[RMDB]
An RNA of 177 nucleotides, treated with 2A3 and DMS and read out base by base.
The reactions ran in a buffer of 150 mM KOAc, 10 mM MgCl2 and 150 mM bicine (pH 8.5), at 24 C.
DMS adducts were read by reverse transcription with MarathonRT.
The data come from the RNA Mapping Database (RMDB), libraries RFM100 and RFMREP.
RNA sequence: GGGAACGACUCGAGUAGAGUCGAAAACGGAAAGACUCAUGGGACGGUUAUCUCGACGAUUUGGCUAUCGAUUUGGCUGCCGACACUUGACGACUACCAUGUUAAUGACGGUGCGGUUUCUUAUGGAAAUUCUUGUAUAGUUCGCUAUACAAGAAUUAAAAGAAACAACAACAACAAC
Reactivity to 2A3 in 0.01 (KOAc 150mM, MgCl2 10mM, bicine 150mM(pH8.5), 24C), signal-to-noise 9, nucleotides 027 to 126: c040g030g020a070a040a020g050a020c010u020c050a050u070g010g000g050a030c050g050g000u070u050a060u060c020u020c030g110a120c040g050a120u050u040u130g040g000c030u050a040u140c050g110a130u050u050u130g050g000c020u040g030c010c000g030a030c020a020c050u030u080g020a020c030g010a020c010u050a070c020c020a030u060g040u090u120a150a100u120g050a030c070g020g020u060g020c040g040g000u020u020u000c010u040u100a130u080g060g030a090
Reactivity to DMS in 0.01 (KOAc 150mM, MgCl2 10mM, bicine 150mM(pH8.5), 24C), signal-to-noise 9, nucleotides 027 to 126: c090g000g010a080a080a090g000a080c080u000c050a070u010g010g000g000a070c090g000g000u010u010a060u010c030u000c040g010a100c090g010a100u010u010u010g020g000c050u000a080u000c080g000a110u010u010u010g010g010c030u000g020c030c010g010a090c090a050c070u010u010g010a090c050g010a080c070u000a130c070c040a060u010g010u010u010a070a070u010g000a080c110g010g010u000g010c270g010g010u000u000u010c010u000u010a110u020g010g010a080